[RMDB]
RNA sequence: GGGAACGACUCGAGUAGAGUCGAAAACAGGCUCAUCAGGUGGCCGGCCUGCUGGUAAUGAAUGCGCACACGGUGACUGACAUGUCCGGGGAGGGCUUUGCCGUGCGCCUCUUCCGGCAGGGCAACCGUUCACCUAGGCAUUCGUGCCUAGGUGAACAAAAGAAACAACAACAACAAC
Reactivity to 2A3 in 0.01 (KOAc 150mM, MgCl2 10mM, bicine 150mM(pH8.5), 24C), signal-to-noise 1, nucleotides 027 to 126: c020a030g040g000c000u020c120a210u070c090a120g220g000u100g080g000c030c000g010g100c010c000u010g000c010u000g070g000u170a130a130u250g060a030a080u170g000c030g000c070a020c000a010c060g010g010u040g030a060c090u110g050a050c080a200u130g000u000c000c020g060g030g150g080a080g000g010g000c000u050u060u060g000c000c010g000u000g000c000g010c000c000u030c000u040u000c000c000g000g000c000a000g010g000g000c040a040a030c010c030
Reactivity to DMS in 0.01 (KOAc 150mM, MgCl2 10mM, bicine 150mM(pH8.5), 24C), signal-to-noise 2, nucleotides 027 to 126: c130a190g040g040c010u000c060a150u000c140a060g020g020u010g000g020c010c030g000g000c000c000u000g020c000u010g000g000u020a030a040u000g000a020a060u010g010c100g020c040a080c060a050c050g020g010u000g000a160c300u020g000a070c230a100u020g000u000c010c000g020g030g010g010a180g020g000g010c000u000u000u000g000c010c010g010u000g010c010g000c000c060u000c010u000u000c000c000g000g000c010a030g000g000g010c010a080a130c080c010